[RMDB]
RNA sequence: GGGAACGACUCGAGUAGAGUCGAAAACGAUAUUGCCGGUGCGCUGGAGAUUGCCCGUUAUGCCCUGAAGUACGGUCUGACCAUGCCGGGUAAACACCGCCGUACCCCGCCGUACAUGUUCACCGAGGAGGUAGCGCUUGCGGCCAUGCGCGCUCACAACCUUGGCAUCUUUCGAGAUGCCAAGGUUAAAAGAAACAACAACAACAAC
Reactivity to 2A3 in 0.01 (KOAc 150mM, MgCl2 10mM, bicine 150mM(pH8.5), 24C), signal-to-noise 1, nucleotides 027 to 156: c050g000a090u050a160u100u290g070c070c020g000g060u010g020c030g060c000u000g000g000a040g020a110u000u200g010c000c000c000g000u180u010a010u090g050c000c010c150u070g140a140a000g020u040a020c020g000g000u030c040u110g070a050c080c050a000u030g040c020c010g000g000g010u040a040a050a000c080a010c000c010g030c020c000g020u050a040c000c000c000c020g000c020c000g010u110a050c000a210u190g140u080u160c080a060c080c100g010a050g000g010a060g020g060u020a030g050c000g000c040u070u130g000c000g050g040c020c000a090u260g000c010g000c020g010c000u000c000a130c050